An RNA of 177 nucleotides, treated with DMS and 2A3 and read out base by base.
2A3 adducts were read by reverse transcription with SuperScript II with manganese.
The data come from the RNA Mapping Database (RMDB), library OK1LIB.
RNA sequence: GGGAACGACUCGAGUAGAGUCGAAAAAUGAAUUCAAUUAUCUCCUGUGGGGAGAAGAUCAUCAUGGAAGUGUUGGAAUUCUGCUUUAUCUCUCCGUUUACCUUUGUUACGAUUCUAAGAAAGAAAAACUAUGAUAGCUCUUCGGAGCUAUCAUAGUAAAAGAAACAACAACAACAAC
Reactivity to DMS in 0.01 (KOAc 150mM, MgCl2 10mM, bicine 150mM(pH8.5), 24C), signal-to-noise 2, nucleotides 027 to 126: a120u000g000a050a060u020u000c030a040a070u000u000a040u020c000u020c070c020u010g060u040g020g030g000g010a060g000a110a200g020a160u000c040a050u000c050a030u010g000g030a020a090g000u000g040u000u000g000g010a020a070u020u000c010u000g020c210u030u010u010a100u030c060u020c000u000c060c010g000u000u000u000a090c020c010u010u000u030g000u000u010a040c160g000a140u010u000c050u000a020a050g010a080a100a120g000a080a070a040a070
Reactivity to 2A3 in 0.01 (KOAc 150mM, MgCl2 10mM, bicine 150mM(pH8.5), 24C), signal-to-noise 2, nucleotides 027 to 126: a000u070g020a010a030u090u060c070a050a160u150u080a060u170c040u060c010c050u080g020u160g100g150g000g000a050g000a000a030g020a090u040c030a030u030c000a010u140g080g070a030a000g040u020g030u200u130g010g150a040a020u000u050c020u040g100c060u090u030u160a180u040c050u010c000u000c010c050g010u000u050u110a210c000c000u050u110u000g070u030u060a130c070g070a190u030u120c020u120a060a010g050a120a210a030g060a010a080a120a000